The data come from the RNA Mapping Database (RMDB), library RNAMAK. This 207-nucleotide RNA was probed chemically with DMS and 2A3. The reactions ran in a buffer of 150 mM KOAc, 10 mM MgCl2 and 150 mM bicine (pH 8.5), at 24 C.

RNA sequence: GGGAACGACUCGAGUAGAGUCGAAAAGGGGUCCCAUCGAUAAGCUCAAAGUUCGCUUGGAUUUAUGGCUGAAGCCUCCACGGCCAUUGUCAGCGAACAUGAGCUUUUGACGAUGGGACGGAGGCACCCAAAACACCCUAGUUUCGACUAGGGUGAAACAUUAUUUACACUUCGGUGUAAAUAAUGUAAAAGAAACAACAACAACAAC
Reactivity to DMS in 0.01 (KOAc 150mM, MgCl2 10mM, bicine 150mM(pH8.5), 24C), signal-to-noise 2, nucleotides 027 to 156: g000g020g040g010u010c000c000c020a060u010c020g000a110u010a030a030g030c000u000c000a070a130a190g030u000u030c010g050c040u010u010g030g010a060u010u000u000a020u000g010g000c020u010g000a070a140g000c020c010u000c010c030a300c050g010g000c010c000a030u000u010g010u000c010a070g030c010g000a000a010c000a220u010g010a020g000c010u000u000u020u000g020a200c080g010a040u000g000g010g010a020c010g010g010a030g050g000c040a190c000c010c010a070a080a130a190c020a010c000c000c000u010a020g000u000u000u010c270g030a080c030u000a020g010g010g020u000g000a020a070
Reactivity to 2A3 in 0.01 (KOAc 150mM, MgCl2 10mM, bicine 150mM(pH8.5), 24C), signal-to-noise 5, nucleotides 027 to 156: g030g010g050g000u010c000c000c000a000u000c000g060a080u010a080a030g010c010u010c020a190a150a110g010u020u030c010g020c080u130u220g120g010a080u250u300u160a030u090g000g000c020u030g030a120a020g050c010c020u030c040c010a020c020g010g000c000c010a010u010u060g050u030c040a020g000c000g000a000a010c000a000u050g000a000g000c000u010u000u000u010g020a010c000g000a000u000g000g000g000a000c010g000g000a000g010g000c020a080c000c000c020a020a060a010a020c010a000c010c000c000u000a010g010u010u100u150c290g090a020c000u000a000g000g000g000u000g000a000a000